[RMDB]
RNA sequence: GGGAACGACUCGAGUAGAGUCGAAAACAACAAUACUUCGGUAUUGUUGAAAAUGGGCCGUCCAAGAAAAGAGCUUCAAAGAGUGGGAGCACUCGGCAAAAAAAACCAGUUGGUUCGCCAACUGGAACAAUUGGUUAAUGUUCGCAUUAACCAAUUGAAAAGAAACAACAACAACAAC
Reactivity to DMS in 0.01 (KOAc 150mM, MgCl2 10mM, bicine 150mM(pH8.5), 24C), signal-to-noise 3, nucleotides 027 to 126: c010a000a010c000a020a010u000a010c010u000u010c170g040g010u000a000u000u000g000u010u000g010a020a050a100a130u010g000g000g010c010c030g000u000c050c040a090a100g000a070a070a080a130g000a120g000c020u000u000c070a070a100a130g000a130g020u010g010g000g010a080g000c020a070c040u000c050g000g000c070a010a010a000a060a050a040a120a140c010c000a010g010u000u000g000g000u000u020c150g010c010c000a000a000c000u000g000g010a060a060
Reactivity to 2A3 in 0.01 (KOAc 150mM, MgCl2 10mM, bicine 150mM(pH8.5), 24C), signal-to-noise 3, nucleotides 027 to 126: c010a000a000c000a000a000u010a000c010u030u050c130g030g000u000a000u000u000g000u010u000g020a050a010a000a060u070g020g030g000c010c020g020u070c040c020a080a040g130a080a130a010a010g040a020g020c020u070u080c070a070a110a080g120a090g070u120g010g020g020a050g030c000a020c030u040c030g030g000c040a020a040a060a020a010a020a010a060c000c000a010g000u000u000g010g010u020u040c080g020c050c000a000a000c010u000g000g020a000a000
Conditions: 150 mM KOAc, 10 mM MgCl2 and 150 mM bicine (pH 8.5), 24 C. The record gives the reactivity of an RNA of 177 nucleotides to DMS and 2A3. For DMS, 2,608 sequencing reads were counted.